[RMDB]
Description:
The record gives the reactivity of an RNA of 177 nucleotides to DMS. Values cover nucleotides 27 to 126.
RNA sequence: GGGAACGACUCGAGUAGAGUCGAAAAGGUGGUCGAGUCUAGACACCCGGGGCCACUACGCUACAAGCGAGGCCGCAUUGUCCCAUAUGUCGGGAGUAACACAUCAGAGAAACUCGCACCCCCGAUCAUUUUCGUCACGAUUCGUCGUGACGAAAAUAAAAGAAACAACAACAACAAC
Reactivity to DMS in 0.01 (KOAc 150mM, MgCl2 10mM, bicine 150mM(pH8.5), 24C), signal-to-noise 1, nucleotides 027 to 126: g000g040u000g000g000u000c000g000a040g030u000c110u000a140g000a220c230a060c000c020c030g010g000g000g000c010c010a120c170u010a090c020g000c030u000a100c300a110a130g040c000g030a120g000g000c000c040g000c070a050u000u010g010u010c000c000c020a170u010a050u000g000u000c050g010g000g020a150g050u000a050a020c120a110c140a170u040c100a100g030a140g000a100a120a070c000u000c000g000c080a090c020c020c070c000c030g000a090u040c160
Record summary
The RNA was probed in 150 mM KOAc, 10 mM MgCl2 and 150 mM bicine (pH 8.5) at 24 C. It was measured as part of the RMDB library OK2TST. Reactivities are rounded to 0.1 and cut off at 0 and 3.